[RMDB]
RNA sequence: GGGAACGACUCGAGUAGAGUCGAAAAUUAGUAAUAAUCCUUACUACUACCCAAUGAGAUGGGCAUUAUAAUCUCUGCCCCACAGUGAGAAAUAGAGACUCAGUGCUAUUAUGAGACUUAUCCAAGGUCAUGAAGAUUGCAAGGAGGGUAUUUAAGGGAGUCACUAGUAAUUCGUUACUAGUGACUCAAAAGAAACAACAACAACAAC
Reactivity to 2A3 in 0.01 (KOAc 150mM, MgCl2 10mM, bicine 150mM(pH8.5), 24C), signal-to-noise 3, nucleotides 027 to 156: u060u020a010g030u050a040a040u090a150a090u220c010c000u010u010a020c000u000a020c010u040a050c000c020c020a040a140u170g050a060g040a110u090g030g010g000c040a050u070u100a060u240a200a110u060c060u000c020u070g000c000c000c060c010a070c040a020g070u070g010a070g080a030a120a040u170a060g080a020g030a060c020u010c050a020g020u010g050c030u060a070u230u050a070u150g060a030g050a120c010u050u070a020u100c030c040a020a060g020g000u030c010a020u100g000a040a030g060a070u080u110g000c010a040a000g050g000a010g020g050g010u020a070u050u120u050a050a060g090g000
Reactivity to DMS in 0.01 (KOAc 150mM, MgCl2 10mM, bicine 150mM(pH8.5), 24C), signal-to-noise 2, nucleotides 027 to 156: u000u000a040g010u000a040a090u000a040a110u000c120c080u000u010a040c020u010a070c030u000a050c040c010c000a090a100u010g010a190g000a100u010g010g020g030c030a040u010u000a120u000a090a070u000c040u010c040u020g000c020c030c010c080a060c080a100g000u020g000a060g000a100a080a180u000a100g000a120g010a140c100u000c060a110g030u000g030c020u000a080u000u000a070u020g030a100g010a060c040u000u010a070u010c060c040a040a120g000g020u000c000a030u010g000a110a150g000a030u010u000g020c000a140a110g000g000a170g010g020g020u010a060u000u000u000a040a120g000g000
The data come from the RNA Mapping Database (RMDB), library OK3TST. Chemical mapping of a 207-nucleotide RNA with 2A3 and DMS. Conditions: 150 mM KOAc, 10 mM MgCl2 and 150 mM bicine (pH 8.5), 24 C.